[RMDB]
Record summary:
An RNA of 177 nucleotides, treated with 2A3 and DMS and read out base by base. For 2A3 the reverse transcriptase was SuperScript II with manganese. Values cover nucleotides 27 to 126. The RNA was probed in 150 mM KOAc, 10 mM MgCl2 and 150 mM bicine (pH 8.5) at 24 C.
RNA sequence: GGGAACGACUCGAGUAGAGUCGAAAACUGAAUGGGAAAAGCUAAAGAAAAUUGUAAAGUGGUUGGAAGACACUCCAGAAGCAACUCUAGCUCACACCCCACUGAAUAACCAUAUUCAAGUUAGGAAACACAAAGAUCUUUUCGAAGAUCUUUGUGUAAAAGAAACAACAACAACAAC
Reactivity to 2A3 in 0.01 (KOAc 150mM, MgCl2 10mM, bicine 150mM(pH8.5), 24C), signal-to-noise 3, nucleotides 027 to 126: c020u040g040a070a060u110g000g010g020a040a050a080a000g000c020u060a060a030a000g080a050a240a080a070u070u040g040u090a160a120a110g020u010g070g060u150u060g050g050a030a040g050a040c010a020c010u000c020c000a030g010a160a000g000c010a010a050c000u000c010u010a010g000c010u010c000a040c000a010c000c010c000c000a020c030u000g020a020a010u050a070a050c050c020a060u060a070u230u040c040a040a060g010u050u070a060g020g090a090a200
Reactivity to DMS in 0.01 (KOAc 150mM, MgCl2 10mM, bicine 150mM(pH8.5), 24C), signal-to-noise 3, nucleotides 027 to 126: c040u000g000a100a120u020g020g010g000a090a120a170a060g000c020u000a020a030a020g010a100a080a140a130u000u010g010u010a090a160a050g000u000g020g060u010u010g010g040a130a140g000a080c050a040c040u010c070c020a100g000a070a070g000c130a110a060c010u000c030u000a040g010c010u000c080a120c190a190c090c000c010c070a060c120u010g000a030a010u000a040a100c190c190a100u020a050u000u000c030a050a060g000u010u010a100g010g000a130a110